[RMDB]
RNA sequence: GGGAACGACUCGAGUAGAGUCGAAAACGUGGUGUACAGCCGUCCAGCCGCGAACGACAGCGGCUCGGUGUGGUCGAGCACCGCGGUCAACACCUGCUGCCGGUGUUCGAUGGUGGUGGAGGUAGCGCCUCGUGAACUACUUCGGUAGUUCACGAGGAAAAGAAACAACAACAACAAC
Reactivity to DMS in 0.01 (KOAc 150mM, MgCl2 10mM, bicine 150mM(pH8.5), 24C), signal-to-noise 2, nucleotides 027 to 126: c050g010u000g000g000u030g000u000a210c170a170g040c000c000g000u010c040c000a010g060c040c000g080c000g000a060a110c300g060a100c190a100g000c000g000g040c010u000c090g000g000u050g010u000g020g040u000c010g020a300g000c100a010c020c000g020c020g000g000u000c050a030a050c060a000c000c000u020g000c000u000g000c100c010g000g000u000g020u000u010c060g030a070u000g020g010u000g000g000u020g040g010a150g010g030u020a030g000c040g040
Reactivity to 2A3 in 0.01 (KOAc 150mM, MgCl2 10mM, bicine 150mM(pH8.5), 24C), signal-to-noise 3, nucleotides 027 to 126: c000g010u030g000g000u020g030u010a090c030a020g020c000c010g080u060c020c010a010g070c000c010g030c030g080a210a110c130g150a030c130a030g020c020g030g000c010u020c030g040g000u130g050u040g060g040u080c030g010a010g050c010a000c000c000g000c000g010g020u030c000a040a060c000a060c000c020u060g060c000u000g020c050c050g000g010u000g020u050u050c110g040a090u100g030g120u070g040g090u090g000g070a020g020g030u010a020g040c010g040
The record gives the reactivity of an RNA of 177 nucleotides to DMS and 2A3. High DMS reactivity at an A or C suggests that its Watson-Crick edge is free. The DMS profile rests on 2,046 reads. As a SHAPE reagent, 2A3 marks flexible, mostly unpaired nucleotides at the ribose 2'-OH.